Record summary
The record gives the reactivity of an RNA of 177 nucleotides to DMS and 2A3. Conditions: 150 mM KOAc, 10 mM MgCl2 and 150 mM bicine (pH 8.5), 24 C. The 2A3 profile rests on 1,605 reads. Source: RMDB library OK1LIB, as collected in RNAgym.
RNA sequence: GGGAACGACUCGAGUAGAGUCGAAAAGUGAUUAUCUGCAAUCCGAAUAACCCACUGGGUACGGCGUUCACCGAAGCCGAGCUACGUGCGAUUGUGGAUAUCGCGGCCCGCCACGGCGCCCGGGUGAUGAGGACUCCAAAUUCGUUUGGAGUCCUCAAAAAGAAACAACAACAACAAC
Reactivity to DMS in 0.01 (KOAc 150mM, MgCl2 10mM, bicine 150mM(pH8.5), 24C), signal-to-noise 2, nucleotides 027 to 126: g030u020g000a000u000u010a010u000c010u000g000c020a000a000u000c010c080g000a280a040u000a030a080c090c080c020a140c160u010g020g000g000u000a130c010g010g030c050g050u040u010c090a100c150c070g000a150a140g020c000c040g000a300g000c020u000a020c130g010u010g010c160g100a030u030u000g040u010g000g010a010u000a000u000c040g000c030g040g000c000c000c060g000c040c070a020c030g010g000c030g000c060c020c000g050g000g020u000g000a140
Reactivity to 2A3 in 0.01 (KOAc 150mM, MgCl2 10mM, bicine 150mM(pH8.5), 24C), signal-to-noise 4, nucleotides 027 to 126: g050u060g010a030u040u200a020u050c010u010g010c020a010a010u000c020c020g060a090a120u070a150a100c080c020c020a260c130u230g010g000g050u110a080c020g000g040c060g090u110u120c120a140c070c110g130a110a010g000c010c020g010a010g040c060u070a070c120g110u120g020c140g000a010u000u020g020u040g000g000a000u000a000u040c030g000c000g010g040c030c000c000g040c030c020a030c020g030g000c030g050c000c020c010g050g000g040u080g030a060